[RMDB]
Structure probing data (2A3 and DMS) for a 177-nucleotide construct. The 2A3 profile rests on 544 reads. 2A3 adducts were read by reverse transcription with SuperScript II with manganese. Source: RMDB library OK1LIB, as collected in RNAgym.
RNA sequence: GGGAACGACUCGAGUAGAGUCGAAAAGACGCCUGUGUGGCGAAGCGAGCAUGAGAAAGAGCCGCACAGUCCAUCUAAUAUAAAGCGGCGAGAUGGAUUGCUCGCGAAAAGAUCCAUCACACUGAGAAUACUCCCGCCUAUUCGUAGGCGGGAGUAUAAAAGAAACAACAACAACAAC
Reactivity to 2A3 in 0.01 (KOAc 150mM, MgCl2 10mM, bicine 150mM(pH8.5), 24C), signal-to-noise 1, nucleotides 027 to 126: g090a000c040g070c020c000u070g000u000g000u010g110g000c000g010a010a010g000c000g000a000g000c000a060u110g020a060g160a040a090a000g170a020g030c010c000g000c050a090c010a010g000u070c000c000a010u010c020u100a090a110u150a240u070a220a170a000g090c000g000g000c030g030a030g040a110u030g000g000a000u000u000g000c010u010c000g020c000g000a000a070a000a000g000a080u000c040c070a000u100c000a020c000a000c080u170g050a140g090a110
Reactivity to DMS in 0.01 (KOAc 150mM, MgCl2 10mM, bicine 150mM(pH8.5), 24C), signal-to-noise 2, nucleotides 027 to 126: g050a300c280g060c090c010u000g010u020g010u010g000g000c140g000a100a150g010c000g010a000g010c000a010u010g010a300g000a070a070a160g010a300g000c000c000g150c000a030c120a060g030u010c130c050a090u000c060u000a040a110u060a130u020a080a090a200g020c020g020g030c000g000a000g000a070u030g000g020a050u000u000g000c000u010c000g000c000g000a000a150a040a080g000a060u000c000c000a070u010c030a130c010a110c110u000g000a150g000a090